Chemical mapping of a 207-nucleotide RNA with 2A3 and DMS. The 2A3 profile rests on 4,810 reads.
RNA sequence: GGGAACGACUCGAGUAGAGUCGAAAAGGAGAGAACCUGGAGUCCUGGCCACACCUUCUGAGCUUCUGACAUUAAGAUUCGGUGUGGUGUGUGAGCAGCUGGGAGUAAAUGUGAGAACAGUCCUGCCAACUACCUUCUCUGCCCCAUCACCACUCAACAGUCGAUUUAAUUUCGAUUAAAUCGACUGAAAAGAAACAACAACAACAAC
Reactivity to 2A3 in 0.01 (KOAc 150mM, MgCl2 10mM, bicine 150mM(pH8.5), 24C), signal-to-noise 6, nucleotides 027 to 156: g030g010a020g000a010g010a030a040c020c070u040g010g010a020g040u040c020c010u000g020g030c020c000a010c010a000c020c000u060u040c040u050g070a050g040c060u120u050c040u130g140a120c040a180u180u160a080a040g050a160u100u110c070g040g000u020g020u020g030g030u000g010u010g000u010g020a050g020c030a000g000c040u080g000g020g020a040g030u120a020a090a100u150g080u100g040a050g010a100a020c020a050g050u030c000c010u020g000c010c000a030a030c030u110a100c020c000u040u050c010u010c010u040g050c000c010c010c000a020u100c030a020c000c010a020c020u070c050a040a120
Reactivity to DMS in 0.01 (KOAc 150mM, MgCl2 10mM, bicine 150mM(pH8.5), 24C), signal-to-noise 3, nucleotides 027 to 156: g000g020a100g020a070g000a070a080c070c040u010g020g010a140g000u000c010c020u010g030g000c010c010a040c020a030c020c020u020u000c030u000g010a240g020c090u000u000c070u010g020a210c100a150u000u000a100a100g010a100u000u000c060g000g010u010g030u010g030g050u000g020u000g000u000g020a080g000c080a060g000c050u000g000g010g020a090g020u010a030a040a070u010g020u000g000a180g020a090a080c080a100g000u000c030c020u000g000c020c020a070a070c120u000a090c070c020u000u000c030u000c020u000g050c020c010c000c000a110u020c040a040c040c020a170c030u010c010a050a300
Overview:
Values cover nucleotides 27 to 156.